[RMDB]
RNA sequence: GGGAACGACUCGAGUAGAGUCGAAAACGUGCGCUAGUACGCAGAGCGAUCACUGAUCCUGGUACGUAGGUACCUCACACGAGCGCGGCGCAGCGCGAUCUAGUCUGCGCGGUACGGCCUGCGAGCGAGCCAUCAACUAGUUCGCUAGUUGAUGGCUAAAAGAAACAACAACAACAAC
Reactivity to 2A3 in 0.01 (KOAc 150mM, MgCl2 10mM, bicine 150mM(pH8.5), 24C), signal-to-noise 2, nucleotides 027 to 126: c030g060u060g000c020g020c040u090a010g080u120a090c070g000c080a010g050a050g100c040g030a060u080c020a050c230u200g010a050u050c000c010u040g000g000u020a020c050g060u050a040g170g050u020a040c000c010u070c030a090c020a040c050g110a050g090c060g000c030g070g000c020g000c010a020g000c020g020c020g030a040u000c030u080a030g130u010c050u040g020c010g000c020g000g030u060a030c030g050g020c000c030u040g010c000g020a040g070c020g050
Reactivity to DMS in 0.01 (KOAc 150mM, MgCl2 10mM, bicine 150mM(pH8.5), 24C), signal-to-noise 3, nucleotides 027 to 126: c060g000u000g000c040g010c030u020a070g020u010a140c050g010c030a070g000a090g040c060g000a050u010c030a130c130u010g000a130u000c040c060u000g000g020u000a000c020g010u000a080g010g010u000a040c010c010u010c110a080c120a110c090g020a080g000c040g010c020g020g020c030g010c010a040g000c050g020c110g000a070u020c110u000a080g000u000c030u000g000c010g030c030g010g010u010a030c020g010g000c030c020u000g000c020g000a110g000c070g000